[RMDB]
RNA sequence: GGGAACGACUCGAGUAGAGUCGAAAAGCGGCCCACCGGCUUCAACAGGGCGACUUCCUGCUGCUGACGGUUGAUCUGUGCUCACUGGCACUGUUGUCGCUGCUGUCUCCGCAGUGGGAGCCAGAGAAGGAUGACAACUAUUCGUAGUUGUCAUCCUAAAAGAAACAACAACAACAAC
Reactivity to DMS in 0.01 (KOAc 150mM, MgCl2 10mM, bicine 150mM(pH8.5), 24C), signal-to-noise 3, nucleotides 027 to 126: g000c070g020g010c020c020c030a130c080c050g030g000c070u000u000c080a050a060c070a040g020g010g020c140g010a050c100u000u010c010c050u000g000c010u010g010c040u010g000a020c020g010g020u000u010g010a050u000c060u000g000u000g010c040u010c140a170c200u030g000g000c010a050c040u000g010u010u000g020u000c040g010c100u010g000c030u000g000u000c030u000c080c160g000c050a070g030u010g010g010g000a090g020c010c030a070g020a150g020a130
Reactivity to 2A3 in 0.01 (KOAc 150mM, MgCl2 10mM, bicine 150mM(pH8.5), 24C), signal-to-noise 2, nucleotides 027 to 126: g010c040g040g050c000c000c000a000c000c020g070g000c010u140u090c040a050a030c000a080g030g010g030c030g040a050c040u150u090c010c020u020g000c010u010g010c010u010g020a010c020g060g000u010u110g020a050u050c060u060g000u040g040c040u030c100a270c240u160g040g020c020a010c020u040g100u100u060g000u020c020g000c110u130g040c010u000g010u000c020u060c030c040g000c020a030g000u050g030g000g020a020g020c020c010a050g030a010g070a170